[RMDB]
RNA sequence: GGGAACGACUCGAGUAGAGUCGAAAAGUAAAGUUACAUAAUCUAGAAACUUCGGUACCGUGUAUAUCUACAACAACUGAGGCUAAACUGGUUGCGGCUGAGAACUCAUCCAUCACUUUUUCAAUGACUCUAAACCUAGGUUCGCCUAGGUUUAGAGAAAAGAAACAACAACAACAAC
Reactivity to DMS in 0.01 (KOAc 150mM, MgCl2 10mM, bicine 150mM(pH8.5), 24C), signal-to-noise 3, nucleotides 027 to 126: g010u020a060a150a080g000u000u000a100c070a050u000a060a070u030c060u000a080g000a090a100a050c010u000u020c040g010g030u000a060c050c070g050u040g010u010a050u060a110u020c070u020a060c080a070a050c130a050a040c050u000g000a030g000g010c020u010a040a080a110c080u000g000g010u010u000g010c060g000g010c010u010g000a100g000a060a090c050u000c030a040u020c010c010a040u020c090a080c060u000u030u010u030u010c060a040a090u020g000a190
Reactivity to 2A3 in 0.01 (KOAc 150mM, MgCl2 10mM, bicine 150mM(pH8.5), 24C), signal-to-noise 5, nucleotides 027 to 126: g110u160a040a060a010g020u070u080a070c040a050u140a140a060u060c060u070a040g080a070a080a020c030u060u060c030g020g030u030a040c030c050g040u020g020u020a050u030a030u110c090u050a060c010a060a010c010a040a020c050u060g010a010g050g000c030u070a100a040a070c040u060g040g040u070u040g040c030g030g000c030u020g020a020g060a100a010c000u000c020a030u020c030c000a040u080c020a050c110u050u080u020u060u070c040a100a110u160g040a090